The record gives the reactivity of an RNA of 177 nucleotides to DMS and 2A3. The DMS profile rests on 1,293 reads. High DMS reactivity at an A or C suggests that its Watson-Crick edge is free. Source: RMDB library OK1LIB, as collected in RNAgym. The 2A3 profile rests on 1,183 reads.
RNA sequence: GGGAACGACUCGAGUAGAGUCGAAAAGUAACUGACAUUGACACAAUGACAAUAGACCCCCAGGUGGAGAAGAAGAUGGGACAAGUGUUACUCAUAGCAGUAGCCAUCUCCAGUGCUGUGCUGCUGCCCCGCAUUGAAGUUUCGACUUCAAUGCGGGAAAAGAAACAACAACAACAAC
Reactivity to DMS in 0.01 (KOAc 150mM, MgCl2 10mM, bicine 150mM(pH8.5), 24C), signal-to-noise 1, nucleotides 027 to 126: g040u040a010a150c010u000g000a110c010a000u000u000g050a040c120a100c090a000a040u000g000a120c090a030a060u050a180g030a140c140c000c000c000c000a040g010g010u000g000g010a040g000a060a110g000a070a040g020a010u010g000g020g050a010c090a010a090g000u000g000u000u000a040c040u010c040a090u000a210g090c040a030g000u000a000g000c000c080a060u000c060u000c260c050a010g000u010g010c120u000g000u000g030c000u000g000c000u000g020c030
Reactivity to 2A3 in 0.01 (KOAc 150mM, MgCl2 10mM, bicine 150mM(pH8.5), 24C), signal-to-noise 2, nucleotides 027 to 126: g000u000a040a130c120u030g020a010c000a020u050u050g040a060c000a070c030a270a140u090g010a090c020a070a000u050a100g080a160c000c000c000c000c000a000g000g070u020g020g070a030g000a110a000g020a040a000g040a060u120g020g000g020a020c020a030a060g060u010g020u150u040a040c000u020c090a080u090a140g000c030a010g030u030a000g010c000c000a080u060c000u030c000c000a030g010u050g060c080u030g040u080g010c010u000g000c000u000g020c030

DMS adducts were read by reverse transcription with MarathonRT.